RNA sequence: GGGAACGACUCGAGUAGAGUCGAAAAUUUUGAUGCAUCUCAGCUAUUUGCUGAGCAUACUUCUCAGAUGUAAUAGUUAAGCCAGGGUUCAGAACGCUGUAGUGGAUCAGACCAGCCGCCGAGCACCAAACAGCAACCAUGACCUUUUUUUGGUGGAUCUACGUCUAAAUUUCGAUUUAGACGUAGAAAAAGAAACAACAACAACAAC
Reactivity to DMS in 0.01 (KOAc 150mM, MgCl2 10mM, bicine 150mM(pH8.5), 24C), signal-to-noise 2, nucleotides 027 to 156: u000u000u000u000g010a080u000g010c020a090u000c010u000c010a020g010c000u000a130u000u010u000g030c010u000g010a050g020c160a050u000a060c070u010u000c020u000c040a100g000a140u000g010u000a070a060u000a070g000u000u000a100a100g030c040c000a070g000g020g030u010u000c040a120g010a090a110c090g020c030u010g020u000a080g010u010g000g000a140u000c030a140g020a070c000c020a180g020c030c090g000c020c030g000a120g030c020a050c010c020a060a070a090c040a100g030c000a060a080c030c020a110u000g010a070c020c020u020u010u000u060u000u000u070g020g010u000g000g020a180
Reactivity to 2A3 in 0.01 (KOAc 150mM, MgCl2 10mM, bicine 150mM(pH8.5), 24C), signal-to-noise 3, nucleotides 027 to 156: u080u100u050u190g040a020u020g010c000a070u020c010u000c020a010g010c030u060a150u170u210u270g000c000u000g000a000g010c020a050u130a090c030u070u090c030u000c040a030g030a170u110g020u110a080a080u070a160g090u080u080a040a010g000c030c010a020g030g000g040u100u100c000a010g010a080a000c020g020c010u020g020u050a070g060u040g040g040a050u060c040a010g120a150c050c030a010g010c000c030g060c060c040g020a050g010c030a020c030c000a040a030a020c000a000g020c030a010a040c040c010a020u060g030a050c000c000u070u050u000u010u000u070u130g050g000u010g020g000a020
Structure probing data (DMS and 2A3) for a 207-nucleotide construct.
2A3 adducts were read by reverse transcription with SuperScript II with manganese.